[RMDB]
RNA sequence: GGGAACGACUCGAGUAGAGUCGAAAAGCCGAUAUUUUGGUCAAUCUGCGCCAGCCAUUGUUCGACAUCCGUUUCAUCGUCAACGGUGGCACGCAAAGGAUAUGCAGUUCUCCAGUGCGAGAGCACGAUACUAUGGAUAUUUCGAUAUCCAUAGUAUAAAAGAAACAACAACAACAAC
Reactivity to 2A3 in 0.01 (KOAc 150mM, MgCl2 10mM, bicine 150mM(pH8.5), 24C), signal-to-noise 9, nucleotides 027 to 126: g040c010c010g030a050u060a200u140u200u090u140g060g000u090c040a030a080u010c050u040g000c000g010c050c070a040g000c000c000a010u010u010g010u020u040c100g000a010c010a070u070c070c080g050u080u150u220c170a200u150c100g020u010c000a010a000c000g010g000u000g000g000c010a010c020g030c010a050a060a040g060g010a040u070a080u230g040c040a010g010u020u000c020u000c020c020a050g030u020g040c030g020a080g000a010g040c000a010c010g010
Reactivity to DMS in 0.01 (KOAc 150mM, MgCl2 10mM, bicine 150mM(pH8.5), 24C), signal-to-noise 9, nucleotides 027 to 126: g010c020c020g010a070u040a040u020u010u020u030g000g010u010c050a070a110u010c070u000g000c120g020c080c170a210g000c000c000a020u000u000g000u000u010c140g010a020c030a110u030c170c140g010u010u010u020c100a100u020c130g000u010c020a020a010c010g000g020u000g000g020c000a080c190g000c050a030a090a110g000g000a060u010a050u010g030c070a120g010u000u000c010u000c010c110a100g020u010g010c010g000a190g000a160g010c010a010c010g010

Conditions: 150 mM KOAc, 10 mM MgCl2 and 150 mM bicine (pH 8.5), 24 C.
This 177-nucleotide RNA was probed chemically with 2A3 and DMS.
Reactivities are given for positions 27 through 126.
For 2A3, 72,308 sequencing reads were counted.
For DMS the reverse transcriptase was MarathonRT.